Chemical mapping of a 177-nucleotide RNA with DMS and 2A3. The RNA was probed in 150 mM KOAc, 10 mM MgCl2 and 150 mM bicine (pH 8.5) at 24 C. It was measured as part of the RMDB library OK1LIB. The DMS profile rests on 24,397 reads.

RNA sequence: GGGAACGACUCGAGUAGAGUCGAAAAGCCUUUCGGGGUACACGAGCGGCGAACGGGCGAGUAACACGUGGGUGAUCUGCCCCGCCCUCUGGGAUAAGCUUGGGAAACUGGGACUGAUACCGGAUAGAAUUUUAUUUUGAUUCGUCAAAAUAAAAUUAAAAGAAACAACAACAACAAC
Reactivity to DMS in 0.01 (KOAc 150mM, MgCl2 10mM, bicine 150mM(pH8.5), 24C), signal-to-noise 8, nucleotides 027 to 126: g000c020c010u000u020u020c060g020g010g020g020u020a050c100a070c110g000a060g010c150g020g000c030g010a150a130c210g000g000g000c020g000a070g010u020a100a100c070a040c080g010u040g020g000g020u010g000a110u020c040u020g000c020c010c000c020g000c020c000c010u000c020u010g000g000g000a090u020a090a090g000c030u000u010g000g000g000a070a080a100c060u010g000g000g000a110c080u000g010a080u010a060c020c020g000g000a080u020a060g000
Reactivity to 2A3 in 0.01 (KOAc 150mM, MgCl2 10mM, bicine 150mM(pH8.5), 24C), signal-to-noise 6, nucleotides 027 to 126: g020c000c000u030u030u060c060g020g000g010g020u060a040c040a010c070g030a020g020c080g040g010c010g010a090a050c020g000g010g000c010g030a020g060u100a080a020c020a010c090g110u150g040g130g010u030g040a120u010c020u100g000c010c000c000c000g000c000c000c000u000c010u010g030g000g010a050u050a090a040g020c010u020u030g030g010g000a010a030a030c020u020g010g000g070a020c010u020g010a040u040a100c010c000g010g010a020u030a070g090